[RMDB]
RNA sequence: GGGAACGACUCGAGUAGAGUCGAAAAGAUAUGGAUUAACUGGAGGAGACGGACAGGUCGGAAACGACCUGAGAACCGUCCCGUUGAAAGUUAAUCCUAAGUCAGACCUCGAAGUUCGCUUCGAGAACAAAUUUCCAGAGUUCGCUCUGGAAAUUUGAAAAGAAACAACAACAACAAC
Reactivity to DMS in 0.01 (KOAc 150mM, MgCl2 10mM, bicine 150mM(pH8.5), 24C), signal-to-noise 1, nucleotides 027 to 126: g020a090u000a300u020g000g010a030u000u000a020a020c000u000g000g000a140g000g000a140g020a000c000g000g000a220c000a040g000g000u010c010g000g060a170a080a220c000g010a010c000c000u040g010a030g000a140a080c000c000g000u000c000c010c000g050u000u000g010a140a140a000g000u020u000a010a000u000c000c000u030a000a090g000u000c060a180g010a140c140c000u000c000g030a010a030g030u000u000c280g020c020u000u000c000g000a040g000a070a200